[RMDB]
Structure probing data (2A3 and DMS) for a 207-nucleotide construct.
For 2A3 the reverse transcriptase was SuperScript II with manganese.
For DMS the reverse transcriptase was MarathonRT.
Values cover nucleotides 27 to 156.

RNA sequence: GGGAACGACUCGAGUAGAGUCGAAAAGCGAUGACGGUCGCGUUAACUGUUGUGUUAACCAUGGUCGUCUCUCGAGCCGAUCUGUAUCUUAGGACAUAUUUUUCCUUUUUCGGAGUAAGAGAUGACUAGUGUCCAAUGGUCCGAAUGAUAAAAAUUACCAUGUAAGCCUAUUCGUAGGCUUACAUGGAAAAGAAACAACAACAACAAC
Reactivity to 2A3 in 0.01 (KOAc 150mM, MgCl2 10mM, bicine 150mM(pH8.5), 24C), signal-to-noise 6, nucleotides 027 to 156: g080c020g040a040u080g020a020c040g040g020u010c020g050c120g030u020u030a010a010c030u060g120u250u100g110u120g000u070u020a010a010c030c020a080u210g000g000u010c000g010u000c000u000c010u000c010g050a040g030c010c000g000a050u020c040u120g090u120a090u030c060u050u100a040g000g010a010c040a060u100a230u100u100u010u060u100c010c000u100u050u020u040u080c080g010g010a050g030u070a090a020g030a000g010a050u090g010a020c060u090a060g050u020g060u100c000c020a040a080u070g020g000u000c030c010g040a040a080u050g040a030u160a100a110a060a020a020u170u120a110
Reactivity to DMS in 0.01 (KOAc 150mM, MgCl2 10mM, bicine 150mM(pH8.5), 24C), signal-to-noise 2, nucleotides 027 to 156: g030c040g030a070u000g020a090c070g030g010u000c020g010c100g000u010u000a040a080c020u000g010u000u000g030u010g030u000u000a040a090c030c060a160u010g000g000u000c000g020u000c010u000c020u000c040g010a090g010c040c000g010a040u010c070u030g010u000a070u000c100u000u000a100g000g070a070c140a080u010a040u000u000u000u010u000c040c010u000u000u020u000u000c040g020g020a050g020u020a050a080g010a090g010a030u000g020a140c030u000a030g020u010g020u000c040c050a080a120u010g030g020u000c050c030g010a090a100u000g030a110u000a020a040a060a070a120u010u010a220